The data come from the RNA Mapping Database (RMDB), library M2RFPK.
An RNA of 207 nucleotides, treated with 2A3 and DMS and read out base by base.
Reactivities are given for positions 27 through 156.
[RMDB]
RNA sequence: GGGAACGACUCGAGUAGAGUCGAAAAAGACCACCUCUACGGAGGUGGUCAAGUCACGUAGCUAGUAUCAGGUUGCAAUACUAGAGCGUUAGUCCUGGGGCGUACGGUGGCAGUACGCUGCCACCGAUAAAACUUGAAUACUUCGGUAUUCAAGUAACAAAGUAAAUAUCUUCGGAUAUUUACUUUGAAAAGAAACAACAACAACAAC
Reactivity to 2A3 in 0.01 (KOAc 150mM, MgCl2 10mM, bicine 150mM(pH8.5), 24C), signal-to-noise 1, nucleotides 027 to 156: a000g000a000c000c000a010c010c010u020c010u010a080c300g060g000a010g050g000u000g000g000u000c000a000a000g010u000c010a000c010g010u000a050g000c000u000a010g030u020a040u070c030a060g150g190u150u110g070c110a050a010u000a010c010u000a000g010a020g010c000g000u000u080a030g030u030c010c000u040g000g000g000g000c110g080u140a050c020g040g000u040g000g000c010a000g010u040a030c200g010c050u000g000c010c010a000c000c000g000a010u020a010a060a010a010c010u010u000g000a000a000u000a010c010u000u060c150g080g000u000a000u010u010c000a000a000g010u010a010a020
Reactivity to DMS in 0.01 (KOAc 150mM, MgCl2 10mM, bicine 150mM(pH8.5), 24C), signal-to-noise 2, nucleotides 027 to 156: a130g000a030c000c010a000c000c020u000c010u000a100c230g060g000a030g030g030u000g010g010u000c000a010a010g010u000c110a080c010g010u000a170g000c020u000a030g010u000a010u000c000a070g000g020u020u010g000c100a140a050u000a010c000u000a030g010a300g000c030g000u010u000a110g010u000c000c010u000g010g010g010g020c150g010u000a030c000g030g000u000g030g070c010a050g030u000a080c210g020c000u000g030c010c000a000c000c000g040a020u000a020a030a100a080c000u000u010g010a020a010u000a010c000u000u010c300g040g030u000a010u010u000c000a000a020g020u010a030a110
About this RNA:
For 2A3, 1,262 sequencing reads were counted.